[RMDB]
RNA sequence: GGGAACGACUCGAGUAGAGUCGAAAACAUCAGUUGCUUGAGCUGCAACCCCUGCUCGUCUAUUCAGACGACGUCGUCCUCUACGGCGAGCCAGCAGGGUUUCAGAACUACCAGUGGUGGGUGGAACCGCAGUACAAUAAUUCGUUAUUGUACUGCGAAAAGAAACAACAACAACAAC
Reactivity to 2A3 in 0.01 (KOAc 150mM, MgCl2 10mM, bicine 150mM(pH8.5), 24C), signal-to-noise 7, nucleotides 027 to 126: c020a050u090c040a030g110u110u060g050c040u060u090g050a030g040c010u010g030c040a010a020c000c020c010c010u000g000c010u010c000g010u000c010u050a210u190u290c110a020g010a020c020g020a050c030g070u070c010g020u030c020c070u100c100u130a010c030g000g010c000g010a030g070c050c010a010g000c020a010g000g030g000u000u020u000c010a000g000a060a040c020u090a100c030c020a050g020u040g070g030u060g010g030g020u040g020g030a050a020c040
Reactivity to DMS in 0.01 (KOAc 150mM, MgCl2 10mM, bicine 150mM(pH8.5), 24C), signal-to-noise 9, nucleotides 027 to 126: c050a060u000c070a060g010u000u000g010c070u000u000g000a090g020c040u000g010c100a030a040c080c010c010c020u000g010c020u000c000g010u000c000u000a180u010u010c260a040g010a020c030g010a150c080g010u000c030g010u000c160c120u000c150u010a120c080g010g000c000g010a080g010c180c140a070g000c030a030g010g000g010u000u000u000c020a030g000a070a070c060u000a090c160c060a080g010u000g010g020u010g000g010g020u000g010g000a110a120c170
The record gives the reactivity of an RNA of 177 nucleotides to 2A3 and DMS. For 2A3 the reverse transcriptase was SuperScript II with manganese. For 2A3, 17,548 sequencing reads were counted. The data come from the RNA Mapping Database (RMDB), library OK2TST.